[RMDB]
Structure probing data (DMS and 2A3) for a 177-nucleotide construct. The DMS profile rests on 724 reads. The 2A3 profile rests on 2,345 reads. Reactivities are given for positions 27 through 126. In probing experiments dimethyl sulfate is read out at A N1 and C N3, which are open when not base-paired. The data come from the RNA Mapping Database (RMDB), library M2PK50.
RNA sequence: GGGAACGACUCGAGUAGAGUCGAAAACUCGUCUGGUUCGCCAGACGAGAAAGAAAAUCCGAGCGAAGGGAAGGGCACAAACGCUCGGACUGCCCAAACCCAAAACGUGGGGGUUCGCCCCCACGAACUCCUAGUACGAGUUCGCUCGUACUAGGAGAAAAGAAACAACAACAACAAC
Reactivity to DMS in 0.01 (KOAc 150mM, MgCl2 10mM, bicine 150mM(pH8.5), 24C), signal-to-noise 1, nucleotides 027 to 126: c000u000c010g000u000c000u000g000g010u000u000c180g000c000c010a010g000a010c010g000a030g000a030a050a090g000a150a040a090a200u000c010c000g000a050g000c000g030a050a060g010g010g020a130a090g010g010g020c010a070c090a060a090a190c020g030c000u000c000g010g000a040c070u000g010c030c000c010a030a050a180c070c010c050a120a050a060a210c020g030u000g000g030g000g050g000u000u020c230g000c000c000c000c000c000a000c010g000a030a140
Reactivity to 2A3 in 0.01 (KOAc 150mM, MgCl2 10mM, bicine 150mM(pH8.5), 24C), signal-to-noise 1, nucleotides 027 to 126: c000u000c000g000u010c000u010g050g040u010u020c180g030c020c000a010g010a000c000g010a000g000a000a000a010g000a000a050a000a010u030c010c010g000a000g020c020g060a120a040g080g030g050a070a090g040g060g010c070a010c030a140a140a030c040g000c000u000c020g000g010a000c000u060g020c000c000c000a050a120a110c040c020c010a050a090a030a050c020g000u000g000g000g020g000g030u020u040c140g110c010c020c010c000c000a010c000g000a000a000